[RMDB]
The record gives the reactivity of an RNA of 207 nucleotides to 2A3.
For 2A3, 718 sequencing reads were counted.
RNA sequence: GGGAACGACUCGAGUAGAGUCGAAAAAGGUGAUUUCUCCUUCACCUUUAUCAAUGGAGGAACUCGACUUUGCUGUGGGUCCCAAAGGGACCUUAGGUGCAGACAGUUACCGGCGGUGAAGUGUGAGCAUAGGUUCGUGUCUUCGGACACGAACCAAGAUGUACGACUCCUUCGGGAGUCGUACAUCAAAAGAAACAACAACAACAAC
Reactivity to 2A3 in 0.01 (KOAc 150mM, MgCl2 10mM, bicine 150mM(pH8.5), 24C), signal-to-noise 2, nucleotides 027 to 156: a000g040g000u030g000a030u060u000u000c010u040c000c030u120u300c040a030c000c020u100u140u080a050u040c070a020a050u300g020g010a000g000g000a050a040c000u000c000g020a010c000u000u000u020g000c000u020g020u090g090g000g020u020c000c010c010a160a210a060g010g000g000a000c000c000u030u100a000g010g000u030g000c020a040g160a300c030a030g010u170u150a050c000c000g000g010c000g000g000u050g010a010a000g010u070g130u120g090a020g010c080a070u140a130g010g000u000u000c000g000u000g000u000c000u000u060c270g110g000a000c000a000c030g000a000a000c000c000a000a000